[RMDB]
An RNA of 177 nucleotides, treated with DMS and 2A3 and read out base by base. Conditions: 150 mM KOAc, 10 mM MgCl2 and 150 mM bicine (pH 8.5), 24 C. The data come from the RNA Mapping Database (RMDB), library RFMREP. Values cover nucleotides 27 to 126.
RNA sequence: GGGAACGACUCGAGUAGAGUCGAAAACGGGGGCCUCGGGAAGAGUUAUCUUUUCUGCUUAACGGCCUGCCAACCCUGGAAUCGGUUCAGCCGGAGGUAGGGUCCAGCGGUCGGAAGAGCACCGCACCACGGAGUAUAAGUUCGCUUAUACUCCGUGAAAAGAAACAACAACAACAAC
Reactivity to DMS in 0.01 (KOAc 150mM, MgCl2 10mM, bicine 150mM(pH8.5), 24C), signal-to-noise 2, nucleotides 027 to 126: c130g010g020g000g010g000c050c020u010c130g020g010g000a020a020g010a080g010u010u010a080u010c010u000u000u010u000c020u010g010c120u000u000a050a300c100g000g000c010c010u010g010c050c120a160a090c020c010c000u000g010g000a130a060u000c030g000g010u000u010c270a180g020c010c010g000g010a130g000g030u000a030g000g000g000u010c060c110a130g000c010g000g020u000c020g000g020a060a170g010a090g010c070a070c050c070g020c070a130c200
Reactivity to 2A3 in 0.01 (KOAc 150mM, MgCl2 10mM, bicine 150mM(pH8.5), 24C), signal-to-noise 1, nucleotides 027 to 126: c040g000g010g000g030g040c000c000u010c020g040g040g030a020a000g020a020g040u150u130a130u070c000u000u040u030u000c060u070g080c020u040u050a050a000c010g000g060c000c000u010g050c000c020a020a020c010c000c000u000g050g110a050a080u100c040g080g000u130u140c050a160g060c070c010g040g000a010g030g100u100a030g000g020g000u070c060c020a040g030c030g020g010u000c000g030g030a170a080g040a090g070c020a010c000c050g070c060a000c000